Description:
An RNA of 177 nucleotides, treated with DMS and 2A3 and read out base by base. DMS (dimethyl sulfate) methylates the pairing face of unpaired adenines and cytosines. The 2A3 profile rests on 3,588 reads. The RNA was probed in 150 mM KOAc, 10 mM MgCl2 and 150 mM bicine (pH 8.5) at 24 C.
RNA sequence: GGGAACGACUCGAGUAGAGUCGAAAAUAUAGUACGAGAGGAACUACGAAUGGGUGCCACUGGUGUACCGGCUGUUCGAAAGAGCACGUGCCGGGCAGCCACGCACCACGGGGUAAGAGCUGAACGCAUAACUAUGUCCGUUCGCGGACAUAGUUAUAAAAGAAACAACAACAACAAC
Reactivity to DMS in 0.01 (KOAc 150mM, MgCl2 10mM, bicine 150mM(pH8.5), 24C), signal-to-noise 4, nucleotides 027 to 126: u050a060u000a030g020u050a050c080g010a120g000a190g000g030a050a090c040u010a030c070g000a180a130u010g000g000g020u010g000c020c030a100c120u000g000g000u010g010u030a270c030c010g000g050c010u010g000u000u000c000g000a090a100a150g010a010g000c020a050c300g010u040g000c010c010g010g020g000c080a300g020c000c000a060c160g000c000a040c000c010a060c070g000g020g030g020u010a060a010g010a120g000c050u010g020a180a180c120g020c140
Reactivity to 2A3 in 0.01 (KOAc 150mM, MgCl2 10mM, bicine 150mM(pH8.5), 24C), signal-to-noise 4, nucleotides 027 to 126: u190a010u040a050g110u030a050c050g010a040g010a050g120g090a090a030c060u080a020c090g120a220a130u100g110g000g000u000g030c010c010a110c040u010g000g000u040g030u160a090c030c000g020g000c010u010g010u010u000c010g030a060a040a060g020a010g020c010a040c220g060u100g060c010c000g010g000g000c000a010g040c000c000a040c120g010c020a000c000c010a000c010g010g020g000g030u070a090a030g010a030g080c070u030g060a080a000c050g010c060